[RMDB]
RNA sequence: GGGAACGACUCGAGUAGAGUCGAAAAGGAGUUAAGUUCGCUUAACUCCCACUACCGAGAAUGCGACUCGGUUUAUCGCAAUAACCCUUGGAAACAAGGGAACCACUGACGACUUCGGUCGUCAGAAGAGAUACUUCAGGUUCGCCUGAAGUAUCUCAAAAGAAACAACAACAACAAC
Reactivity to DMS in 0.01 (KOAc 150mM, MgCl2 10mM, bicine 150mM(pH8.5), 24C), signal-to-noise 2, nucleotides 027 to 126: g010g000a040g000u000u000a000a020g020u010u000c270g060c020u000u000a010a010c000u000c000c000c070a010c140u000a180c050c000g000a020g000a150a160u000g010c100g010a020c000u000c010g020g000u000u000u000a070u010c070g020c060a100a120u010a100a060c000c000c000u000u010g000g000a240a090a140c000a030a010g010g000g010a020a060c200c170a140c010u000g010a000c010g050a040c000u000u000c180g030g010u000c010g010u000c010a010g000a030a050
Reactivity to 2A3 in 0.01 (KOAc 150mM, MgCl2 10mM, bicine 150mM(pH8.5), 24C), signal-to-noise 2, nucleotides 027 to 126: g010g010a000g000u010u010a020a000g010u040u110c170g020c130u030u000a010a000c010u000c000c000c000a060c040u060a030c020c020g000a020g020a040a100u140g040c030g090a020c020u000c010g030g020u010u080u060a050u040c000g010c060a080a060u100a250a210c020c000c000u000u000g010g030a040a030a020c010a000a000g000g010g010a000a000c010c020a060c010u000g000a000c020g000a000c000u050u020c220g070g010u000c000g010u000c000a000g010a010a000
The record gives the reactivity of an RNA of 177 nucleotides to DMS and 2A3.
Reactivities are given for positions 27 through 126.
The 2A3 profile rests on 2,910 reads.
High 2A3 reactivity points to a flexible backbone, as in loops and unpaired stretches.
For DMS the reverse transcriptase was MarathonRT.